Notes
The record gives the reactivity of an RNA of 207 nucleotides to 2A3 and DMS. For 2A3, 1,289 sequencing reads were counted. Values cover nucleotides 27 to 156. It was measured as part of the RMDB library OK3TST. The RNA was probed in 150 mM KOAc, 10 mM MgCl2 and 150 mM bicine (pH 8.5) at 24 C. 2A3 adducts were read by reverse transcription with SuperScript II with manganese. DMS (dimethyl sulfate) methylates the pairing face of unpaired adenines and cytosines. 2A3 is a SHAPE reagent: it acylates the 2'-hydroxyl of flexible nucleotides of all four kinds.

[RMDB]
RNA sequence: GGGAACGACUCGAGUAGAGUCGAAAAAAUGUUCGUAUAUCGUUAUCGUCGUAUAAAUUAAAGGUGUGUUUUUUGCCAUUAAGUGACAUUAUAAUUUUACCAAUAUUGGAAUUAUAAUAUAGGUGUAUUUGAGCACUAGAAACGGUCGAUGCAUCGGGUGAAGUAUCAUUUUCGAAUGAUACUUCACAAAAGAAACAACAACAACAAC
Reactivity to 2A3 in 0.01 (KOAc 150mM, MgCl2 10mM, bicine 150mM(pH8.5), 24C), signal-to-noise 3, nucleotides 027 to 156: a010a010u180g010u030u040c060g000u070a120u010a030u160c020g010u070u080a100u060c070g030u020c030g040u110a040u120a200a130a070u150u100a100a120a080g030g000u020g000u010g050u030u060u010u070u080u120g020c000c010a020u070u040a150a010g050u030g090a010c000a020u000u020a030u000a030a020u020u040u060u300a150c010c000a170a120u230a160u300u070g000g000a010a010u000u020a000u020a020a010u080a020u170a180g020g000u030g000u050a100u030u090u110g050a010g030c000a010c020u020a040g070a030a140a000c020g020g050u060c010g030a000u070g040c010a010u050c010g140g040
Reactivity to DMS in 0.01 (KOAc 150mM, MgCl2 10mM, bicine 150mM(pH8.5), 24C), signal-to-noise 2, nucleotides 027 to 156: a050a060u020g000u010u010c030g050u010a100u000a050u010c030g010u000u000a080u000c070g030u000c020g000u000a060u000a130a160a130u000u000a040a060a090g010g030u000g010u000g020u000u000u000u020u000u000g020c000c010a110u000u000a060a130g030u010g000a030c050a070u000u000a010u000a030a000u000u000u010u000a110c120c000a030a260u000a190u000u000g010g000a060a010u000u000a030u000a000a010u000a270u000a170g020g010u000g010u010a050u000u000u010g010a090g010c030a010c020u000a120g000a120a090a040c010g010g020u010c130g020a080u030g010c040a060u000c030g020g000